RNA sequence: GGGAACGACUCGAGUAGAGUCGAAAAGAGGGUUCGCCCGAAGCACGAUAUAUCCGGCGAUUAAGUGCGAGCUACUCCGAAAUGGAUAUAAACGCCGGAUAAAUUGCAUGAAAGGAGUAGCGAAGAAGGGAACUGUGAUGUUCGCAUCGCGGUUCCCAAAAGAAACAACAACAACAAC
Reactivity to DMS in 0.01 (KOAc 150mM, MgCl2 10mM, bicine 150mM(pH8.5), 24C), signal-to-noise 9, nucleotides 027 to 126: g020a190g010g010g020u000u010c080g020c000c010c010g010a140a160g010c010a030c030g010a150u020a090u010a100u000c000c000g000g000c010g010a170u010u030a080a100g000u000g000c020g010a130g000c000u010a010c010u000c000c000g010a060a170a080u030g000g010a100u020a080u020a080a150a120c040g010c000c000g000g010a010u010a000a040a080u020u020g010c060a070u020g000a050a110a230g000g000a020g020u000a000g000c000g010a080a110g000a150a140
Reactivity to 2A3 in 0.01 (KOAc 150mM, MgCl2 10mM, bicine 150mM(pH8.5), 24C), signal-to-noise 7, nucleotides 027 to 126: g140a030g040g070g010u080u100c130g070c030c010c000g020a030a010g010c000a000c090g020a010u030a000u000a010u250c000c000g020g000c020g040a040u100u180a170a030g030u020g030c000g010a010g000c000u000a000c000u000c010c000g040a060a100a050u140g040g040a030u050a010u100a210a180a020c030g000c000c000g030g000a020u020a010a030a020u050u200g090c060a020u080g120a140a060a050g010g000a000g000u000a010g000c000g000a020a010g060a030a050

The record gives the reactivity of an RNA of 177 nucleotides to DMS and 2A3. The reactions ran in a buffer of 150 mM KOAc, 10 mM MgCl2 and 150 mM bicine (pH 8.5), at 24 C. The data come from the RNA Mapping Database (RMDB), library OK1LIB. DMS adducts were read by reverse transcription with MarathonRT.